[RMDB]
RNA sequence: GGGAACGACUCGAGUAGAGUCGAAAAGGGAUCUCUACACGCAAGCAAGUAUAGCCAUCAGCACUUAAAGUAGGCCGCCGGGGACACUCACCUUAGCCCGCGCGCUCCGAAUUUUAUGUAGUGUUGACUUUUGCAUCUGGUUCGCCAGAUGCAAAAGAAAAGAAACAACAACAACAAC
Reactivity to DMS in 0.01 (KOAc 150mM, MgCl2 10mM, bicine 150mM(pH8.5), 24C), signal-to-noise 2, nucleotides 027 to 126: g000g000g000a060u010c020u030c010u000a090c060a000c150g010c010a030a070g040c100a080a090g010u020a130u050a080g000c000c080a100u040c040a020g000c000a090c010u030u030a030a030a070g020u000a170g050g000c300c010g020c000c000g040g030g010g030a060c060a070c120u050c120a040c060c060u000u030a170g000c000c010c000g000c110g000c050g030c020u020c030c020g040a090a060u010u020u040u000a040u040g000u000a000g010u000g010u010u000g010a140
Reactivity to 2A3 in 0.01 (KOAc 150mM, MgCl2 10mM, bicine 150mM(pH8.5), 24C), signal-to-noise 3, nucleotides 027 to 126: g040g010g030a050u010c030u020c000u030a010c020a010c050g020c030a000a060g000c010a080a020g060u090a090u100a090g050c020c020a020u030c000a020g030c000a020c050u020u050a020a110a030g040u050a030g040g000c030c010g000c000c000g050g000g030g030a030c050a020c130u080c010a110c000c000u010u150a030g090c020c000c000g030c010g000c000g000c040u000c000c010g060a060a060u170u150u100u050a130u080g100u080a020g010u000g010u020u020g010a040